[RMDB]
RNA sequence: GGGAACGACUCGAGUAGAGUCGAAAAAUGCGGAACUCAUCUUUCUGCGGGCCAACAACAUGCGCGACUCGAGGCUAUCGUUGCGCAGCUCCACCGACAGUUCCGUGCAUUCCACCAUCUCGUCGAAGUACUUUUACGUAUUCGUACGUAAAAGUACAAAAGAAACAACAACAACAAC
Reactivity to 2A3 in 0.01 (KOAc 150mM, MgCl2 10mM, bicine 150mM(pH8.5), 24C), signal-to-noise 3, nucleotides 027 to 126: a000u110g000c010g000g000a020a060c120u010c050a130u040c120u030u230u050c070u120g040c070g030g000g000c040c030a110a080c040a020a020c010a160u100g010c010g010c010g050a020c020u060c170g070a070g190g030c090u130a090u200c030g010u000u020g000c010g000c000a010g000c010u020c010c010a060c010c020g060a040c020a040g000u010u000c000c000g000u010g010c000a070u030u020c010c010a050c030c020a120u050c080u030c100g180u030c040g080a110a020
Reactivity to DMS in 0.01 (KOAc 150mM, MgCl2 10mM, bicine 150mM(pH8.5), 24C), signal-to-noise 7, nucleotides 027 to 126: a050u000g000c010g000g000a030a020c040u010c140a170u010c070u000u000u010c070u010g020c110g020g000g020c040c220a080a090c130a060a070c160a260u000g000c010g010c010g020a040c030u000c140g020a050g020g010c170u010a090u000c050g000u000u000g000c030g010c030a060g000c030u000c030c020a050c100c090g000a050c280a040g000u000u000c020c010g010u000g020c090a110u000u000c030c030a130c130c120a070u000c080u000c080g010u010c080g010a120a110